Chemical mapping of a 177-nucleotide RNA with DMS and 2A3.
2A3 adducts were read by reverse transcription with SuperScript II with manganese.
For 2A3, 34,094 sequencing reads were counted.
The RNA was probed in 150 mM KOAc, 10 mM MgCl2 and 150 mM bicine (pH 8.5) at 24 C.
For DMS the reverse transcriptase was MarathonRT.
For DMS, 13,888 sequencing reads were counted.
RNA sequence: GGGAACGACUCGAGUAGAGUCGAAAAUGGUGGUGUCGGCGGCAACAUCGCGACCCUGGCCACCGUGAUCGGCAGCAAUAACACGGCGACCGAGGCCAGCGCGGUGGGCAUCGGGGGCAACACCGCCCCUAUAUUUUACUUUCGAGUAAAAUAUAGGAAAAGAAACAACAACAACAAC
Reactivity to DMS in 0.01 (KOAc 150mM, MgCl2 10mM, bicine 150mM(pH8.5), 24C), signal-to-noise 6, nucleotides 027 to 126: u050g010g040u000g000g020u000g020u010c050g020g030c000g010g000c130a160a130c140a040u020c020g030c010g010a180c100c110c010u010g000g000c000c000a040c040c030g010u010g010a100u020c030g000g000c300a110g020c040a070a050u020a090a100c200a140c240g000g000c050g000a120c060c040g000a050g010g000c060c100a080g000c010g020c000g000g020u020g000g000g020c100a040u010c050g010g000g000g000g010c050a060a070c040a050c030c030g000c010c000
Reactivity to 2A3 in 0.01 (KOAc 150mM, MgCl2 10mM, bicine 150mM(pH8.5), 24C), signal-to-noise 9, nucleotides 027 to 126: u150g010g010u010g010g010u010g010u040c070g120g130c010g010g020c040a080a050c010a120u080c010g000c010g040a120c060c010c010u020g010g010c000c000a030c030c010g010u010g020a170u070c050g070g010c040a070g020c030a100a170u110a240a070c080a020c090g070g000c030g060a090c040c040g040a070g030g040c030c010a030g020c010g000c000g000g010u010g010g020g000c010a040u100c020g070g020g020g010g000c010a010a010c000a010c010c000g010c000c000